[RMDB]
RNA sequence: GGGAACGACUCGAGUAGAGUCGAAAAUUGCAACUCGGCAUGGACUCGCUGCUCUUCCUUGAACUCAGUAGCGAUAUUCAGCACUACCUGGGUGUACGCAUCAAUGCGGAACGGGCGUGGCAGGAUCGCCGCGUAUAACAUUCGUGUUAUACGCGGCAAAAGAAACAACAACAACAAC
Reactivity to DMS in 0.01 (KOAc 150mM, MgCl2 10mM, bicine 150mM(pH8.5), 24C), signal-to-noise 3, nucleotides 027 to 126: u020u010g020c130a100a100c090u000c050g000g010c060a060u000g010g000a050c150u000c040g000c110u010g000c030u000c080u000u000c030c050u010u000g010a040a050c060u000c000a000g030u000a030g020c050g000a110u000a070u000u000c160a090g000c060a040c030u000a050c110c050u000g000g000g010u000g010u000a110c070g010c020a050u000c170a080a080u000g020c010g010g000a090a070c120g020g000g010c070g030u000g000g020c030a060g010g000a100u030c210
Reactivity to 2A3 in 0.01 (KOAc 150mM, MgCl2 10mM, bicine 150mM(pH8.5), 24C), signal-to-noise 2, nucleotides 027 to 126: u130u110g040c030a020a030c030u010c030g000g010c040a070u120g030g000a020c010u000c030g040c020u020g000c010u000c020u060u030c030c020u040u100g070a040a040c020u020c080a030g020u030a000g020c000g020a010u020a120u170u120c030a010g030c030a000c020u050a050c040c030u040g000g020g000u070g030u070a040c030g000c000a030u080c060a050a190u110g030c000g000g040a050a030c030g040g040g000c040g020u030g050g010c050a040g010g040a070u170c050